[RMDB]
RNA sequence: GGGAACGACUCGAGUAGAGUCGAAAAACGACAUGGAUCCCAUGUCCAUGGAUCGAUCCUCCAUGCUAGCUAGACGAUCAGGAUCCACGAUCUGCAUCAUGCUCAUGCAUGACUAGAUGAUCGGUACUGGUCUUGGAGACUUCGGUCUCCAAGACCAAAAAGAAACAACAACAACAAC
Reactivity to 2A3 in 0.01 (KOAc 150mM, MgCl2 10mM, bicine 150mM(pH8.5), 24C), signal-to-noise 1, nucleotides 027 to 126: a000c040g020a010c010a040u020g010g050a150u120c060c050c000a030u080g020u000c020c000a010u030g040g000a000u030c060g010a050u010c000c000u020c020c010a030u050g000c020u070a100g070c030u070a030g030a150c050g030a050u080c070a000g060g000a030u000c000c020a050c030g000a010u000c000u000g020c010a020u000c020a000u030g000c000u170c180a120u300g000c020a010u000g010a000c010u050a050g050a270u100g050a000u010c010g010g010u090a120c040
Reactivity to DMS in 0.01 (KOAc 150mM, MgCl2 10mM, bicine 150mM(pH8.5), 24C), signal-to-noise 2, nucleotides 027 to 126: a150c080g030a080c000a070u000g000g010a150u000c080c050c110a130u020g020u000c030c030a080u000g000g000a060u020c070g000a020u000c020c030u010c020c010a040u000g020c130u020a040g040c110u000a040g010a140c160g000a070u020c110a040g020g000a080u000c070c160a090c040g010a020u000c000u010g000c180a070u000c000a010u000g000c010u010c230a130u020g000c010a000u000g010a010c060u000a160g010a280u030g000a000u000c000g010g000u020a090c100
The record gives the reactivity of an RNA of 177 nucleotides to 2A3 and DMS. Conditions: 150 mM KOAc, 10 mM MgCl2 and 150 mM bicine (pH 8.5), 24 C. For DMS the reverse transcriptase was MarathonRT.